[RMDB]
RNA sequence: GGGAACGACUCGAGUAGAGUCGAAAACUGCGCUCGGCGUGUGUGCUGUGUGUGCUUGCUGGUGCCCUGUGCUGCGGUGGGACGUCAAGGUCAGUUCGUAUGCUGCGGGAAAUGGCCGCCGAGGAGGGAUAAGCAAAGACUUCGGUCUUUGCUUAUCAAAAGAAACAACAACAACAAC
Reactivity to 2A3 in 0.01 (KOAc 150mM, MgCl2 10mM, bicine 150mM(pH8.5), 24C), signal-to-noise 2, nucleotides 027 to 126: c020u040g000c040g050c030u000c010g060g000c010g000u100g040u020g000u050g060c000u000g050u090g050u030g010u000g120c030u030u120g020c030u050g010g090u060g030c020c000c000u020g070u040g010c000u000g020c000g000g000u110g030g100g020a020c030g070u160c090a090a010g130g020u020c000a010g040u070u050c020g000u030a080u290g000c050u050g010c090g020g010g000a050a110a070u070g040g000c000c010g010c010c000g020a010g000g030a060g070g040
Reactivity to DMS in 0.01 (KOAc 150mM, MgCl2 10mM, bicine 150mM(pH8.5), 24C), signal-to-noise 2, nucleotides 027 to 126: c030u000g000c080g010c000u010c030g010g000c030g030u010g020u010g040u000g020c020u010g020u020g020u000g020u000g010c030u000u000g000c030u000g010g010u000g020c020c010c030u000g020u000g030c030u000g030c030g000g040u000g020g020g020a070c030g000u010c260a110a130g020g010u010c020a070g010u000u010c070g020u000a060u000g020c030u010g020c060g000g010g000a050a030a050u000g000g000c000c030g000c000c020g020a040g010g010a130g020g010
Conditions: 150 mM KOAc, 10 mM MgCl2 and 150 mM bicine (pH 8.5), 24 C. An RNA of 177 nucleotides, treated with 2A3 and DMS and read out base by base. DMS adducts were read by reverse transcription with MarathonRT. The 2A3 profile rests on 1,674 reads.